[RMDB]
RNA sequence: GGGAACGACUCGAGUAGAGUCGAAAAUCAGCUUUUCCCACUGCUCUGGUUACUAGUCACGUGCCUUUACUCCAGAUGCAUCACCAGCUUGCAUAUCUCUCCUGGGUACUAGUCUGGUCUGUCUGGUUUUCUAUGGUAGAUGUGUAUUUGAAUGCUACAUUUACCAUCACUUCGGUGAUGGUAAAUGAAAAGAAACAACAACAACAAC
Reactivity to DMS in 0.01 (KOAc 150mM, MgCl2 10mM, bicine 150mM(pH8.5), 24C), signal-to-noise 2, nucleotides 027 to 156: u010c040a160g020c110u000u000u000u000c010c020c020a240c130u020g030c050u000c050u000g020g040u020u000a100c100u010a070g000u010c060a100c070g010u010g020c040c020u000u000u010a100c050u000c000c030a060g010a080u010g020c060a090u000c040a060c040c060a060g010c040u010u010g010c090a120u000a100u000c040u000c040u010c070c030u010g000g010g040u000a050c040u000a050g030u000c010u000g020g010u000c070u010g020u000c000u000g020g000u000u000u000u000c050u000a110u010g000g040u000a060g020a060u000g030u000g020u000a070u000u000u000g010a100a110u010g010c010u000a130
Reactivity to 2A3 in 0.01 (KOAc 150mM, MgCl2 10mM, bicine 150mM(pH8.5), 24C), signal-to-noise 5, nucleotides 027 to 156: u080c010a010g060c030u090u050u040u000c000c000c020a020c030u040g010c000u010c030u050g050g020u070u100a060c050u060a070g070u070c050a040c150g080u110g030c020c000u090u120u100a080c030u020c010c000a020g010a080u100g030c020a030u110c030a010c040c010a010g050c030u020u040g010c050a050u020a060u060c030u010c020u050c070c040u060g020g000g000u010a020c000u010a000g070u030c020u050g050g060u030c030u040g040u000c010u020g030g040u070u030u070u050c050u060a120u150g010g020u030a040g020a120u040g020u000g030u060a080u050u110u110g140a140a050u110g010c000u040a040
An RNA of 207 nucleotides, treated with DMS and 2A3 and read out base by base. The DMS profile rests on 6,740 reads. For 2A3, 4,555 sequencing reads were counted.